An RNA of 177 nucleotides, treated with DMS and 2A3 and read out base by base. Reactivities are rounded to 0.1 and cut off at 0 and 3. For DMS the reverse transcriptase was MarathonRT. For 2A3, 1,552 sequencing reads were counted.

RNA sequence: GGGAACGACUCGAGUAGAGUCGAAAAGAUAUGGAAUUCCGUGUGACAUGAUCGGGGUGUCGGAAACGACACGCCGUGAUCAACAGCACACGGAGAUUCCUAAGUCAAAGGUUCGUUCGCGAACCAACGUGGAAAGCACGUUCGCGUGCUUUCCACGAAAAGAAACAACAACAACAAC
Reactivity to DMS in 0.01 (KOAc 150mM, MgCl2 10mM, bicine 150mM(pH8.5), 24C), signal-to-noise 2, nucleotides 027 to 126: g000a050u000a300u000g000g010a040a060u010u020c000c020g040u000g000u000g000a130c200a300u000g000a020u020c000g010g010g000g000u000g020u000c000g000g000a100a100a140c010g010a020c000a000c010g000c010c010g000u000g000a010u010c030a020a100c290a170g030c000a030c040a010c000g030g000a060g020a040u000u000c000c010u020a020a170g010u000c030a100a140a150g040g000u010u000c010g020u000u030c260g020c040g010a020a010c000c030a020a050
Reactivity to 2A3 in 0.01 (KOAc 150mM, MgCl2 10mM, bicine 150mM(pH8.5), 24C), signal-to-noise 1, nucleotides 027 to 126: g030a030u080a070u030g000g020a010a000u030u000c010c030g050u000g000u000g030a200c140a300u220g010a020u170c000g000g020g010g000u010g000u030c000g000g030a020a080a030c000g040a000c010a010c080g000c000c000g000u040g020a000u060c020a040a200c060a150g060c020a020c000a000c080g020g010a040g000a010u010u000c020c000u000a020a030g030u000c100a300a070a070g040g000u000u040c030g050u100u200c300g000c000g160a000a010c000c000a010a020